[RMDB]
RNA sequence: GGGAACGACUCGAGUAGAGUCGAAAACAAUCUGUCCAUACGGCACUUUGUUAACUGUCCACAGAAACUUGCUCGUGGAAAAACAUCCUGUUAAGAUAGAUAAGGUGCUGCCGUCCUCAUAGCGCGAAGAGUAUUUACUCUUCGGAGUAAAUACUCUAAAAGAAACAACAACAACAAC
Reactivity to DMS in 0.01 (KOAc 150mM, MgCl2 10mM, bicine 150mM(pH8.5), 24C), signal-to-noise 7, nucleotides 027 to 126: c070a080a040u010c060u000g020u000c010c050a110u010a100c130g010g010c100a020c040u000u010u000g010u000u000a080a120c130u000g010u000c010c020a030c030a080g000a080a110a110c190u010u010g020c040u000c100g030u000g010g000a020a050a070a080a080c090a060u000c070c040u000g010u000u010a120a090g010a070u010a060g000a060u000a070a060g000g010u000g010c020u000g010c050c040g010u010c020c010u000c080a070u010a040g010c110g020c120g020a100
Reactivity to 2A3 in 0.01 (KOAc 150mM, MgCl2 10mM, bicine 150mM(pH8.5), 24C), signal-to-noise 6, nucleotides 027 to 126: c010a010a060u030c020u050g040u000c020c020a060u060a160c040g010g020c030a010c070u060u070u060g030u060u060a110a060c050u110g060u050c020c000a010c010a040g080a080a230a100c110u110u210g030c010u060c080g020u020g020g000a030a070a020a010a000c020a040u050c010c020u040g030u090u060a080a030g020a100u090a030g040a030u060a070a050g040g000u020g000c020u040g020c010c020g030u030c000c000u070c010a080u110a040g080c070g030c040g110a070

An RNA of 177 nucleotides, treated with DMS and 2A3 and read out base by base. The data come from the RNA Mapping Database (RMDB), library OK2TST. High DMS reactivity at an A or C suggests that its Watson-Crick edge is free.